[RMDB]
RNA sequence: GGGAACGACUCGAGUAGAGUCGAAAAAUGGCGAAUGCAUGGGGAACUACAUCUGUGUCGCGAGUCCGAUUCUCGCCAGGGCCUGGUCCUGUAGCUCAGUUGGUAGAGCAAGCUGUUCCCCGGACACAAAAUCCAGCUAGGUUCGCCUAGCUGGAAACUAUACGGAGUACUUCGGUACUCCGUAUAGAAAAGAAACAACAACAACAAC
Reactivity to 2A3 in 0.01 (KOAc 150mM, MgCl2 10mM, bicine 150mM(pH8.5), 24C), signal-to-noise 2, nucleotides 027 to 156: a000u100g050g010c060g070a100a060u150g030c070a060u120g000g000g000g030a020a010c010u070a040c090a070u060c060u040g040u030g040u110c050g000c010g000a010g000u040c110c060g030a060u090u050c000u000c010g040c020c000a010g000g000g000c000c150u100g040g090u030c000c000u010g050u070a020g010c000u010c010a020g030u080u130g180g040u120a030g010a010g050c000a030a020g030c050u040g000u020u010c000c000c000c000g010g020a060c070a000c010a030a130a000a000u030c000c000a010g000c000u000a000g010g020u040u070c130g070c060c010u000a000g000c000u000g000g000a000a000a000
Reactivity to DMS in 0.01 (KOAc 150mM, MgCl2 10mM, bicine 150mM(pH8.5), 24C), signal-to-noise 2, nucleotides 027 to 156: a130u000g000g000c020g000a070a050u000g000c020a140u020g010g020g000g040a050a200c010u000a050c040a090u010c050u010g060u000g020u000c030g000c050g010a020g040u000c050c030g020a300u000u000c000u000c010g000c070c020a060g000g030g000c040c100u000g070g010u010c020c000u000g000u000a050g020c010u000c000a150g000u000u000g030g000u000a040g000a070g070c030a100a120g030c040u010g010u000u000c000c000c000c050g000g000a060c170a110c070a070a040a120a110u000c000c000a030g010c000u000a000g000g050u010u040c270g000c040c020u000a000g040c000u000g000g000a000a000a050